Source information:
Conditions: 150 mM KOAc, 10 mM MgCl2 and 150 mM bicine (pH 8.5), 24 C. Chemical mapping of a 177-nucleotide RNA with DMS and 2A3. For DMS, 2,234 sequencing reads were counted. It was measured as part of the RMDB library OK2TRN. For 2A3, 1,140 sequencing reads were counted. DMS adducts were read by reverse transcription with MarathonRT. Reactivities are given for positions 27 through 126.

RNA sequence: GGGAACGACUCGAGUAGAGUCGAAAAUUUGAGUGAUGGGGGGACGCAGUAGGAUAGGGUAAGCGCGCUGUUGGAUAUGCGCGUCCAAGCAGUUAGGCCGAUGAGUAGGCAAAUCCGCUCAUCACACUGUCGAAUACUGAUUCGUCAGUAUUCGACAAAAAGAAACAACAACAACAAC
Reactivity to DMS in 0.01 (KOAc 150mM, MgCl2 10mM, bicine 150mM(pH8.5), 24C), signal-to-noise 3, nucleotides 027 to 126: u000u000u000g010a080g010u000g000a030u010g020g020g010g000g000g060a050c160g000c080a080g020u010a120g010g010a100u010a100g000g010g010u000a120a130g010c020g000c080g010c010u010g000u000u030g010g000a100u000a080u000g010c050g000c050g020u000c030c020a070a110g000c040a080g020u000u000a110g010g000c030c030g000a090u020g020a120g000u010a180g020g010c060a050a120a160u010c050c000g000c000u000c000a000u000c000a060c070a100c160
Reactivity to 2A3 in 0.01 (KOAc 150mM, MgCl2 10mM, bicine 150mM(pH8.5), 24C), signal-to-noise 1, nucleotides 027 to 126: u090u070u220g070a040g000u020g030a010u030g030g000g000g000g010g000a000c060g010c040a010g040u120a030g080g080a110u060a030g010g100g020u040a080a070g000c000g010c000g000c040u060g030u230u090g070g000a070u060a010u110g030c090g000c010g040u010c010c010a000a060g050c020a020g000u110u260a060g130g000c000c000g000a020u070g000a010g120u150a000g010g000c020a060a020a000u000c000c030g110c080u010c020a000u030c000a010c000a000c020